[RMDB]
RNA sequence: GGGAACGACUCGAGUAGAGUCGAAAAAGUUCCUCUUCUUCCUCCCUGCUGAGGUUCUUCCCUCCCGAGGAGAGCUGCUUCUUCUUGUUCUCCAGGGCCUUCCUUCUUCGGUGAUCCCGUCUCUCCUACCCACGCUUGUUCGCAAGCGUGAAAAGAAACAACAACAACAAC
Reactivity to DMS in 0.01 (KOAc 150mM, MgCl2 10mM, bicine 150mM(pH8.5), 24C), signal-to-noise 6, nucleotides 027 to 129: a100g000u000u000c000c040u030c080u020u010c000u050u030c050c000u020c010c030c020u000g000c030u040g020a080g000g020u010u040c060u020u030c010c000c000u000c000c020c030g000a120g030g010a010g000a050g020c100u030g000c100u020u020c080u010u000c080u040u040g040u050u000c010u010c020c030a210g000g000g000c010c000u000u000c020c040u000u030c000u010u020c050g000g020u020g000a110u020c020c020c020g020u020c000u000c030u000c020c030u000a100c090c050
Reactivity to 2A3 in 0.01 (KOAc 150mM, MgCl2 10mM, bicine 150mM(pH8.5), 24C), signal-to-noise 7, nucleotides 027 to 129: a000g010u030u010c000c000u030c000u030u010c000u070u040c010c010u020c000c010c010u030g000c030u040g030a030g050g000u020u020c010u030u030c020c000c000u030c000c010c000g030a090g020g010a020g010a000g000c050u090g030c030u120u070c010u150u020c020u120u170g020u040u010c020u000c020c020a020g020g010g010c010c000u040u030c010c000u030u050c000u030u020c010g040g020u040g040a070u020c010c000c010g060u010c000u000c000u000c010c010u030a080c000c020